Chemical mapping of a 207-nucleotide RNA with 2A3 and DMS.
Reactivities are given for positions 27 through 156.
Conditions: 150 mM KOAc, 10 mM MgCl2 and 150 mM bicine (pH 8.5), 24 C.

RNA sequence: GGGAACGACUCGAGUAGAGUCGAAAAUUCGGUCCUGUGGAGCGGACCGUAUGCUCCGUCAGGAUGUGGAGGUAUCGCGCCCUCCUAUGCGCGUAUGUACAUCGAUACGGUUAUGUCGCCUUUGUGUCGGCGUUUGACACUUACACAUACCGGAUAAAUAAUGAGGUGCAUUCGUGCACCUCAUUAUAAAAGAAACAACAACAACAAC
Reactivity to 2A3 in 0.01 (KOAc 150mM, MgCl2 10mM, bicine 150mM(pH8.5), 24C), signal-to-noise 2, nucleotides 027 to 156: u080u020c000g070g020u020c000c030u040g020u110g150g050a030g010c020g070g010a050c010c000g020u010a040u130g070c000u000c050c020g140u060c030a010g020g000a000u030g020u120g040g000a090g020g000u040a030u150c000g010c010g010c030c000c000u030c000c010u020a070u100g040c080g040c010g020u060a020u080g100u000a060c040a140u080c170g130a080u060a150c040g040g050u030u070a010u060g160u190c050g020c010c060u100u100u040g050u030g000u020c020g020g010c070g040u040u030u090g010a000c000a000c000u030u040a030c030a000c000a000u070a120c000c040g020g010a080u070a130a230
Reactivity to DMS in 0.01 (KOAc 150mM, MgCl2 10mM, bicine 150mM(pH8.5), 24C), signal-to-noise 1, nucleotides 027 to 156: u000u030c010g040g010u000c010c000u010g060u010g010g020a080g050c070g000g000a240c180c200g030u000a050u010g000c010u000c010c000g030u010c060a030g030g000a060u000g000u000g010g020a070g000g030u000a090u010c030g030c020g020c040c000c010u000c010c000u000a050u000g000c020g000c030g000u030a070u010g060u000a080c070a110u000c080g010a210u000a060c030g020g020u000u010a050u000g010u000c050g030c070c080u000u020u000g020u010g030u000c030g020g010c100g020u010u000u000g000a070c030a040c030u000u000a090c010a010c040a050u010a080c020c020g010g020a070u000a060a060